The record gives the reactivity of an RNA of 207 nucleotides to 2A3 and DMS. The RNA was probed in 150 mM KOAc, 10 mM MgCl2 and 150 mM bicine (pH 8.5) at 24 C. Reactivities are given for positions 27 through 156. The DMS profile rests on 1,809 reads.
RNA sequence: GGGAACGACUCGAGUAGAGUCGAAAAAGGGAUGGGAAUUACUAACAGAAGUCGUUCUUCCCAUCCCGAUCAUUAGGAUGGGAGUGAGCUGGCGCCAACACACAUCAUGACGCAACGUGGUUCCGGCGCGGACUCGCACCGGUGUAUCGUAAUGCGAGUACGCAAGGGAUUUCGAUCCCUUGCGUACAAAAGAAACAACAACAACAAC
Reactivity to 2A3 in 0.01 (KOAc 150mM, MgCl2 10mM, bicine 150mM(pH8.5), 24C), signal-to-noise 3, nucleotides 027 to 156: a000g010g040g000a000u020g000g030g040a070a030u100u050a030c060u090a230a100c040a150g200a240a030g050u070c050g010u010u020c000u000u000c000c000c000a000u000c000c000c050g000a010u020c010a030u000u020a030g100g000a030u090g050g030g030a080g030u060g020a040g060c010u060g200g010c020g010c000c020a090a070c150a000c010a010c010a150u160c010a040u280g130a110c140g030c210a120a020c130g010u020g010g000u070u050c080c070g000g010c000g000c000g010g040a060c020u010c030g040c000a010c000c020g030g000u130g000u060a090u100c080g010u040a040a060u160g070c000g020a030
Reactivity to DMS in 0.01 (KOAc 150mM, MgCl2 10mM, bicine 150mM(pH8.5), 24C), signal-to-noise 1, nucleotides 027 to 156: a070g000g040g010a050u000g030g030g030a020a030u010u000a150c090u000a090a300c210a200g030a040a100g040u000c190g010u000u000c040u020u010c000c030c000a010u000c010c000c000g010a020u000c030a150u000u020a130g000g040a120u000g010g010g000a020g060u010g010a060g050c020u010g010g040c010g090c020c040a050a070c110a090c080a020c090a150u010c050a110u010g010a070c110g000c060a030a040c060g020u000g000g030u000u000c020c050g020g050c060g050c000g020g000a080c080u000c040g010c020a030c010c000g030g000u010g010u010a050u050c030g000u010a050a200u000g000c010g000a300